[RMDB]
RNA sequence: GGGAACGACUCGAGUAGAGUCGAAAAGAUAUGGACAAGUACAACAGCGGAUGAUCGGAAACGAUCAUUCCGACAUGUAUGUCCUAAGUCAAAGGAUGUCGUAUUUCUUCGGAAAUACGACAUCCAAGGUGUGUUACCUCUUCGGAGGUAACACACCAAAAGAAACAACAACAACAAC
Reactivity to DMS in 0.01 (KOAc 150mM, MgCl2 10mM, bicine 150mM(pH8.5), 24C), signal-to-noise 1, nucleotides 027 to 126: g000a030u010a300u000g000g010a010c040a060a140g050u000a030c010a040a040c170a140g070c030g020g000a010u000g000a000u000c000g010g000a060a050a100c000g010a000u000c000a040u000u000c000c000g040a010c180a110u000g010u010a050u000g010u000c010c000u010a060a110g000u010c010a070a160a150g010g000a000u000g010u030c000g000u010a020u000u000u000c030u000u010c190g010g000a000a000a000u000a000c000g000a010c010a000u000c000c000a000a010
Reactivity to 2A3 in 0.01 (KOAc 150mM, MgCl2 10mM, bicine 150mM(pH8.5), 24C), signal-to-noise 2, nucleotides 027 to 126: g030a030u100a050u110g000g000a010c040a160a200g190u090a040c030a120a040c070a180g140c000g000g000a000u000g010a000u000c020g020g020a040a040a050c020g010a010u000c000a000u130u100c010c010g030a000c010a040u070g000u000a040u030g000u000c000c010u010a140a070g070u020c070a130a060a060g000g000a010u020g000u030c010g000u010a000u030u000u000c030u020u090c300g100g030a040a030a000u000a010c000g000a000c010a000u000c000c020a000a010